[RMDB]
RNA sequence: GGGAACGACUCGAGUAGAGUCGAAAACGCUUCGGAAGAAAACACUGCAUUAGCCCAUAUUAAUCCAAAUUCGUUAGAGAAUAACUUGGUUAAAUUGGGCAUCUUUAAACGUGCUAUCGAGAUUGGCCGCAUGGGCAGAGUUCGCUCUGCCCAUGCGAAAAGAAACAACAACAACAAC
Reactivity to DMS in 0.01 (KOAc 150mM, MgCl2 10mM, bicine 150mM(pH8.5), 24C), signal-to-noise 1, nucleotides 027 to 126: c030g000c210u000u000c070g010g000a170a090g020a020a010a080a200c140a050c130u050g000c060a080u030u000a000g000c000c000c000a000u000a240u000u000a000a030u010c070c040a000a160a070u000u000c110g000u000u120a290g000a170g000a000a000u000a150a030c060u000u000g000g000u000u000a000a100a300u000u000g000g000g000c000a010u010c010u010u000u030a110a110a120c100g000u000g000c000u010a050u000c030g000a190g000a060u000u040g020g000c120
Reactivity to 2A3 in 0.01 (KOAc 150mM, MgCl2 10mM, bicine 150mM(pH8.5), 24C), signal-to-noise 1, nucleotides 027 to 126: c010g000c030u090u070c020g100g020a070a030g000a050a100a020a000c020a040c080u090g040c060a060u100u120a020g000c010c010c010a000u010a060u080u000a000a000u080c010c010a000a050a050u050u070c020g060u140u150a050g020a000g020a260a030u060a060a030c090u010u010g000g000u000u060a030a020a030u000u010g000g000g000c000a000u000c000u000u100u040a090a150a020c040g020u000g050c000u020a020u110c020g020a040g040a210u030u110g100g000c030
The data come from the RNA Mapping Database (RMDB), library OK1LIB. Chemical mapping of a 177-nucleotide RNA with DMS and 2A3. The DMS profile rests on 1,028 reads. Values cover nucleotides 27 to 126. Conditions: 150 mM KOAc, 10 mM MgCl2 and 150 mM bicine (pH 8.5), 24 C.